Structure probing data (DMS and 2A3) for a 177-nucleotide construct. It was measured as part of the RMDB library TTRDES. Conditions: 150 mM KOAc, 10 mM MgCl2 and 150 mM bicine (pH 8.5), 24 C.
RNA sequence: GGGAACGACUCGAGUAGAGUCGAAAAGAUAUGGAAUUGUUCGUGACAUGACCUCUGGUCGGAAACGACCAACGUGAGGUCAACAGCACGACAAUUCCUAAGUCAAAAGUCUCGGUUCGCCGAGACAUCGUUGUAUUAUCUUCGGAUAAUACAACGAAAAAGAAACAACAACAACAAC
Reactivity to DMS in 0.01 (KOAc 150mM, MgCl2 10mM, bicine 150mM(pH8.5), 24C), signal-to-noise 8, nucleotides 027 to 126: g000a020u000a260u010g000g000a020a010u000u000g000u020u010c010g020u000g010a040c090a230u010g000a020c000c000u000c000u010g010g000u000c000g010g010a030a040a060c000g010a020c000c000a020a120c300g010u010g010a010g010g010u000c000a030a030c190a190g000c000a010c000g010a030c010a010a010u000u000c000c000u000a010a070g000u000c020a120a100a120a140g000u000c000u000c000g010g010u000u010c300g030c000c010g010a010g000a000c010a010
Reactivity to 2A3 in 0.01 (KOAc 150mM, MgCl2 10mM, bicine 150mM(pH8.5), 24C), signal-to-noise 7, nucleotides 027 to 126: g010a000u030a020u080g010g010a010a010u020u020g090u270u260c030g000u000g060a100c140a300u300g000a000c000c000u000c020u030g020g000u000c000g010g000a020a030a020c010g010a000c020c000a040a080c250g280u100g020a010g000g000u000c000a000a010c020a010g000c000a000c000g000a000c000a000a000u000u000c000c000u010a020a000g010u000c010a000a070a070a180g000u000c010u020c000g030g030u100u100c300g050c040c010g010a010g010a010c000a030